[RMDB]
RNA sequence: GGGAACGACUCGAGUAGAGUCGAAAAGGCGGCAGUCCUCAGUGCUCUUACUCUUUCCUAUAAAGAGGAGACUGCUGGACUCGCCGCCCGAGCCCGAGCAUGGGCCCCAGUUCCGAACGAAGAGACCCACCUGUAACCUUCGGGUUACAGAAAAGAAACAACAACAACAAC
Reactivity to 2A3 in 0.01 (KOAc 150mM, MgCl2 10mM, bicine 150mM(pH8.5), 24C), signal-to-noise 9, nucleotides 027 to 129: g010g010c000g000g000c000a010g010u010c010c000u020c010a030g010u150g250c030u000c020u070u270a300c010u020c010u020u030u060c060c090u150a170u240a260a020a000g000a010g020g000a000g000a000c000u010g050c050u010g000g010a000c000u030c070g000c000c000g000c000c000c000g000a010g010c000c000c000g010a060g020c070a110u150g000g010g000c000c000c000c000a010g010u120u030c010c010g020a050a040c020g000a030a020g010a010g020a060c010c000c000a040c010
Reactivity to DMS in 0.01 (KOAc 150mM, MgCl2 10mM, bicine 150mM(pH8.5), 24C), signal-to-noise 9, nucleotides 027 to 129: g000g000c000g050g000c010a050g020u000c000c010u000c030a020g010u040g040c070u030c020u040u110a300c040u000c030u030u010u040c190c170u070a150u070a070a010a010g040a020g040g010a000g000a040c020u020g000c130u020g000g000a020c000u000c120g050c000c020g020c000c000c000g020a030g020c030c000c010g020a090g020c160a000u090g000g000g000c020c010c020c020a120g030u040u030c000c030g010a060a070c070g030a020a010g020a030g030a070c010c010c020a120c170